[RMDB]
RNA sequence: GGGAACGACUCGAGUAGAGUCGAAAAGAUAUGGAUUGCCCUGGGAGAAGUAAUUCGGAAACGAAUUAUACUUCUUUGAUCAGGCGCAAUCCUAAGUCAAAGUGAGCGCAGUUCGCUGCGCUCACAACCUUUACAUUCACUUCGGUGAAUGUAAAGGAAAAGAAACAACAACAACAAC
Reactivity to DMS in 0.01 (KOAc 150mM, MgCl2 10mM, bicine 150mM(pH8.5), 24C), signal-to-noise 3, nucleotides 027 to 126: g000a000u000a090u000g000g000a020u000u000g010c000c000c000u000g010g000g010a000g010a020a000g010u000a010a010u000u000c000g010g000a020a020a050c000g010a010a010u000u000a100u010a090c060u000u000c000u000u000u030g000a040u010c000a000g000g010c300g000c010a000a000u000c000c000u000a010a090g000u010c000a110a160a130g010u000g000a020g020c010g010c000a040g020u000u010c280g020c000u000g020c010g000c000u010c000a000c010a050a070
Reactivity to 2A3 in 0.01 (KOAc 150mM, MgCl2 10mM, bicine 150mM(pH8.5), 24C), signal-to-noise 2, nucleotides 027 to 126: g000a000u020a020u060g000g000a010u000u020g000c000c000c000u020g000g020g020a050g010a010a010g020u010a000a010u010u010c010g000g000a020a000a010c010g000a000a010u050u010a020u040a070c010u040u000c000u300u140u060g030a010u010c000a000g030g000c050g020c060a000a000u000c010c000u010a020a010g000u010c030a040a090a200g010u000g000a000g000c020g000c010a000g010u070u150c240g100c210u010g000c000g000c010u000c000a000c000a000a000